[RMDB]
RNA sequence: GGGAACGACUCGAGUAGAGUCGAAAAUGAGACCUCGGAGGAUGAAGGAGACUAAAACGUUAAUCGCUAUUGCAUCUCCGCAGAGUAAUGGAGAAUCAAUGGGACAGUACGCUUAACCGCGUAAUGGGUUUAAACAGUGCGCAUUUUAGAAGUUUGCCAAUACGCAUAUAUUCGUAUAUGCGUAUUGAAAAGAAACAACAACAACAAC
Reactivity to 2A3 in 0.01 (KOAc 150mM, MgCl2 10mM, bicine 150mM(pH8.5), 24C), signal-to-noise 9, nucleotides 027 to 156: u140g010a020g030a040c020c020u020c040g030g010a020g030g010a030u080g040a050a030g040g010a020g000a010c050u140a050a050a050a050c060g050u080u110a070a050u150c050g010c110u070a060u050u100g010c020a070u010c010u000c020c010g000c040a040g020a020g120u130a080a090u160g020g000a010g020a040a070u040c030a020a050u040g010g000g010a010c020a030g040u040a010c010g000c000u050u060a040a030c040c000g000c010g010u010a030a030u050g040g000g020u030u090u080a070a080a010c040a030g040u040g060c030g000c050a040u030u050u060u080a050g020a090a030g030u040u110u080g060c020
Reactivity to DMS in 0.01 (KOAc 150mM, MgCl2 10mM, bicine 150mM(pH8.5), 24C), signal-to-noise 6, nucleotides 027 to 156: u010g010a140g020a090c030c020u000c050g010g010a070g030g010a090u010g010a080a080g000g010a080g000a090c060u010a050a050a080a090c050g020u000u010a080a100u000c020g030c020u000a060u000u000g010c090a170u000c020u000c010c020g000c090a140g020a140g020u010a070a090u010g010g000a060g010a060a160u000c040a050a070u000g020g010g010a090c020a060g000u000a040c010g000c010u000u000a090a160c250c210g010c020g030u000a040a060u000g010g020g010u000u020u000a070a050a090c050a050g030u000g020c050g010c030a080u010u000u000u000a090g020a080a130g010u000u000u000g000c090